[RMDB]
RNA sequence: GGGAACGACUCGAGUAGAGUCGAAAAUAUUGCCUGAAUCAGUCUGGAGGGGCUUUCACUUUUCAGUAAUGAACAUACCUGCACCGAGGACAGGGCUUUUCUCUGCUUCAGGAAACUAAAGCUGGUACUAUCCCACCGUUUUCGAACGGUGGGAUAGAAAAGAAACAACAACAACAAC
Reactivity to DMS in 0.01 (KOAc 150mM, MgCl2 10mM, bicine 150mM(pH8.5), 24C), signal-to-noise 2, nucleotides 027 to 126: u020a050u040u050g000c010c010u010g010a070a040u050c060a080g000u060c060u010g010g000a060g000g020g030g000c020u000u060u020c030a020c010u030u000u000u000c050a010g040u030a080a140u020g030a100a160c170a040u060a110c010c010u020g000c000a200c070c090g020a040g000g000a130c040a080g000g030g010c270u000u000u000u010c010u060c000u020g000c060u000u000c050a040g000g000a030a090a140c090u040a030a050a050g020c000u030g020g030u000a190
Reactivity to 2A3 in 0.01 (KOAc 150mM, MgCl2 10mM, bicine 150mM(pH8.5), 24C), signal-to-noise 3, nucleotides 027 to 126: u270a050u060u180g070c000c020u030g080a040a070u090c010a000g170u030c020u060g050g060a080g000g030g000g020c040u010u060u010c050a050c000u050u020u030u040c010a050g010u130a120a150u150g030a040a000c010a040u070a080c000c010u020g000c010a030c020c010g040a040g020g070a130c020a050g000g000g000c000u050u040u030u010c050u000c000u000g000c000u000u040c030a050g000g110a100a110a030c090u140a150a100a050g040c020u070g050g000u020a040

The record gives the reactivity of an RNA of 177 nucleotides to DMS and 2A3. The RNA was probed in 150 mM KOAc, 10 mM MgCl2 and 150 mM bicine (pH 8.5) at 24 C. For DMS, 1,804 sequencing reads were counted.